[RMDB]
RNA sequence: GGGAACGACUCGAGUAGAGUCGAAAAACACACGAGAUCGAACGUUCACGAGUACGAUCGAGAGAGAUCGAGAUCGAGAACGAGAGAGUACACGAUCGUGUACGAACACUCUCGAACGUGAUCGAACGAUCACGAGUUCACGUGAUCUCACGUGUACGAACCAAAAGGAGUUCGCUCCUUUUGGUUCAAAAGAAACAACAACAACAAC
Reactivity to 2A3 in 0.01 (KOAc 150mM, MgCl2 10mM, bicine 150mM(pH8.5), 24C), signal-to-noise 7, nucleotides 027 to 156: a010c090a010c010a020c050g060a050g000a080u010c030g030a050a020c010g020u010u000c020a010c020g030a050g110u170a080c030g000a020u010c020g010a010g000a010g010a010g010a090u030c020g000a020g010a070u010c000g020a020g040a150a040c030g000a010g000a000g000a020g040u010a000c000a000c000g220a300u300c300g030u000g000u020a010c010g040a130a010c090a020c080u020c000u010c010g010a070a040c000g000u000g000a000u010c010g010a040a010c040g000a000u000c000a000c020g030a040g030u070u050c020a000c040g030u030g090a200u080c080u110c100a000c020g000u000g010u040a030c100
Reactivity to DMS in 0.01 (KOAc 150mM, MgCl2 10mM, bicine 150mM(pH8.5), 24C), signal-to-noise 2, nucleotides 027 to 156: a070c010a060c050a080c050g000a110g000a050u000c020g000a070a260c000g020u000u000c010a100c050g010a170g080u010a240c020g000a030u010c010g000a300g000a190g000a190g010a120u010c020g020a300g010a110u000c000g010a170g000a110a120c000g000a040g020a050g030a240g020u000a010c010a030c010g000a160u000c180g060u010g050u000a030c000g000a050a060c100a090c010u010c000u000c000g030a030a290c030g050u000g000a030u000c010g020a030a220c050g020a020u000c010a130c020g000a120g020u000u020c050a040c000g000u000g000a110u000c090u000c030a020c020g010u010g000u000a100c110